An RNA of 177 nucleotides, treated with DMS and 2A3 and read out base by base.
DMS adducts were read by reverse transcription with MarathonRT.
Conditions: 150 mM KOAc, 10 mM MgCl2 and 150 mM bicine (pH 8.5), 24 C.
[RMDB]
RNA sequence: GGGAACGACUCGAGUAGAGUCGAAAAAGGCGAGGCCGACAGGCGUAGUCGAUGGAUAACCGGUUGAUAUUCCGGUACCCGCUGUGAAGCGUCAAACAUCGAGCAUCGUGAUGCUAAGGCCGUGAAGGGUAAGCGUGCAAUUCGUUGCACGCUUACCAAAAGAAACAACAACAACAAC
Reactivity to DMS in 0.01 (KOAc 150mM, MgCl2 10mM, bicine 150mM(pH8.5), 24C), signal-to-noise 2, nucleotides 027 to 126: a130g000g040c090g020a270g010g020c020c010g000a130c230a080g000g010c000g010u000a190g020u000c010g010a020u000g000g010a020u000a190a070c000c000g000g000u010u000g010a160u010a180u010u020c000c000g020g030u000a020c050c060c000g000c010u010g000u020g000a140a030g000c000g000u000c100a090a010a110c060a000u000c010g020a050g010c140a050u000c030g010u010g010a110u010g000c060u000a090a250g000g000c000c000g000u000g030a090a130g000
Reactivity to 2A3 in 0.01 (KOAc 150mM, MgCl2 10mM, bicine 150mM(pH8.5), 24C), signal-to-noise 1, nucleotides 027 to 126: a000g250g010c090g040a060g070g000c020c020g080a010c040a070g040g040c020g030u040a030g020u020c000g000a000u040g020g020a050u020a130a030c000c010g050g020u010u100g130a140u030a110u160u070c000c000g000g000u000a090c010c030c000g070c010u000g000u030g110a120a000g010c010g000u060c030a110a040a040c000a010u000c010g030a030g010c020a070u070c020g020u070g070a200u010g000c000u100a090a030g000g000c150c000g000u040g120a030a020g080